RNA sequence: GGGAACGACUCGAGUAGAGUCGAAAAGAUAUGGAGGACAGGUCAUUGAUGAAUAUCUUUUGACGAGAUUGGGUCGGAAACGACCCGUUUCUCGAUAAGAUACAUCAAUGACCUGUCCUCCUAAGUCCAGUUAACUUCUGUUCGCAGAAGUUAACUGAAAAGAAACAACAACAACAAC
Reactivity to DMS in 0.01 (KOAc 150mM, MgCl2 10mM, bicine 150mM(pH8.5), 24C), signal-to-noise 4, nucleotides 027 to 126: g000a110u000a300u000g000g010a010g000g020a000c000a000g010g000u000c000a010u000u010g000a010u000g000a190a180u010a010u010c000u000u000u000u000g020a200c150g010a010g000a020u000u010g010g000g040u000c000g010g010a110a090a290c000g010a010c000c000c000g000u000u000u000c000u000c000g020a140u010a020a010g000a020u000a040c000a000u000c000a010a000u000g010a000c010c000u000g000u000c000c000u000c000c000u000a000a070g000u000c050